Chemical mapping of a 207-nucleotide RNA with DMS and 2A3. Reactivities are rounded to 0.1 and cut off at 0 and 3. For DMS the reverse transcriptase was MarathonRT. For 2A3 the reverse transcriptase was SuperScript II with manganese.
[RMDB]
RNA sequence: GGGAACGACUCGAGUAGAGUCGAAAACGUCCGGGAUCGUGACCACAGCUUGGCCUUCGGUGAAGCAGAAGGCUUGCGAGCUGGCCCUCGGCGUGGACGACUGGCAGGAAGGUAUCGGCCGGCUGGCCUUGGCGAAACGGGCGAACGGUAAGUUCGCUGCUUCUGAACUAUUCGUAGUUCAGAAGCAAAAAGAAACAACAACAACAAC
Reactivity to DMS in 0.01 (KOAc 150mM, MgCl2 10mM, bicine 150mM(pH8.5), 24C), signal-to-noise 1, nucleotides 027 to 156: c020g010u000c000c020g010g010g020a090u010c080g010u010g000a100c000c010a140c020a060g050c050u000u000g010g030c000c000u030u000c000g010g140u000g010a100a180g040c050a070g000a050a050g020g020c040u000u000g030c030g000a060g030c050u010g000g010c020c010c010u000c030g020g000c020g030u010g010g010a270c040g020a070c010u010g010g010c020a080g010g020a060a060g020g020u010a040u000c050g020g040c010c020g000g000c030u010g020g020c010c010u000u000g010g000c030g010a090a080a100c040g000g000g010c000g000a020a010c010g030g030u000a100a120g020u010u000c030g020c030
Reactivity to 2A3 in 0.01 (KOAc 150mM, MgCl2 10mM, bicine 150mM(pH8.5), 24C), signal-to-noise 3, nucleotides 027 to 156: c030g070u070c000c000g000g010g010a150u150c070g110u170g120a170c050c020a030c030a030g000c010u070u090g060g010c000c010u010u010c000g190g000u120g160a120a030g060c110a070g010a020a000g000g000c000u010u020g020c050g020a030g000c040u010g010g010c040c000c010u030c020g030g000c020g030u020g000g010a020c000g000a040c010u010g030g010c020a030g010g050a050a030g040g020u050a080u130c040g040g010c030c020g030g030c060u050g010g000c020c010u020u030g010g010c070g000a050a060a050c000g030g030g000c020g010a010a000c010g040g150u210a090a050g000u030u010c000g000c000